RNA sequence: GGGAACGACUCGAGUAGAGUCGAAAAGCGUACUACCUUGCUUUUGACGAGCGAUUGGUGUGGGAGAGUUCUCCCAAAUAGGAGAACUCAUCGAUCACACUAGAGCUCGAUAAGCAAGGUAUCGCAAAACCACGUGUAGGUUCGCCUACACGUGGAAGAGAUUAGCCUACUUCGGUAGGCUAAUCUCAAAAGAAACAACAACAACAAC
Reactivity to 2A3 in 0.01 (KOAc 150mM, MgCl2 10mM, bicine 150mM(pH8.5), 24C), signal-to-noise 3, nucleotides 027 to 156: g000c000g030u050a120c050u000a000c050c000u000u010g020c000u070u050u090u260g300a110c030g000a000g000c020g300a300u110u140g050g000u000g000u000g010g000g000a060g000a010g000u000u000c000u090c010c000c020a130a300a070u300a050g000g010a000g000a000a000c020u020c020a030u240c000g010a040u080c000a000c010a030c070u230a030g000a020g040c000u000c000g000a000u000a020a000g010c000a000a000g000g000u010a010u020c020g000c000a040a060a000a040c000c000a010c010g000u010g000u000a010g050g050u020u020c200g140c160c000u000a010c000a020c000g000u010g010g000a010a010
Structure probing data (2A3) for a 207-nucleotide construct. The reactions ran in a buffer of 150 mM KOAc, 10 mM MgCl2 and 150 mM bicine (pH 8.5), at 24 C. It was measured as part of the RMDB library RNAMAK.